This 177-nucleotide RNA was probed chemically with DMS and 2A3. The 2A3 profile rests on 1,136 reads. 2A3 adducts were read by reverse transcription with SuperScript II with manganese. DMS adducts were read by reverse transcription with MarathonRT. Source: RMDB library OK2TRN, as collected in RNAgym.
[RMDB]
RNA sequence: GGGAACGACUCGAGUAGAGUCGAAAAUGGAUCGGCCGUAUAGUACCGUGGCCUGGUACGAUCGGCCGUGCUAGGCCUGCAUACUCGUACAUAUGAUCGACAGAUCGUACUGCUGAGCGCCGCUGCGGUUAGGGCCACUGUUCGCAGUGGCCCUAACAAAAGAAACAACAACAACAAC
Reactivity to DMS in 0.01 (KOAc 150mM, MgCl2 10mM, bicine 150mM(pH8.5), 24C), signal-to-noise 2, nucleotides 027 to 126: u020g000g030a140u010c030g000g010c030c010g010u020a010u000a130g000u000a000c030c020g000u000g010g020c100c070u040g000g000u000a000c010g000a140u010c060g000g020c060c000g020u000g000c100u000a110g010g000c010c020u000g030c090a080u000a110c070u000c080g020u020a100c110a170u000a020u000g000a020u000c020g000a130c300a120g000a020u000c010g000u000a030c100u000g050c080u000g000a090g000c060g030c060c050g010c120u000g010c030g010
Reactivity to 2A3 in 0.01 (KOAc 150mM, MgCl2 10mM, bicine 150mM(pH8.5), 24C), signal-to-noise 1, nucleotides 027 to 126: u180g070g020a030u060c060g000g040c000c000g040u100a100u000a100g000u050a060c010c050g030u060g110g030c000c020u000g000g000u000a000c000g010a050u070c020g010g050c070c000g000u000g000c000u050a010g000g000c000c010u000g000c000a060u080a190c020u050c160g040u050a040c060a000u130a080u220g020a020u030c050g050a080c080a070g000a000u040c040g000u080a050c050u040g070c020u060g000a020g100c000g060c040c010g050c080u070g040c060g120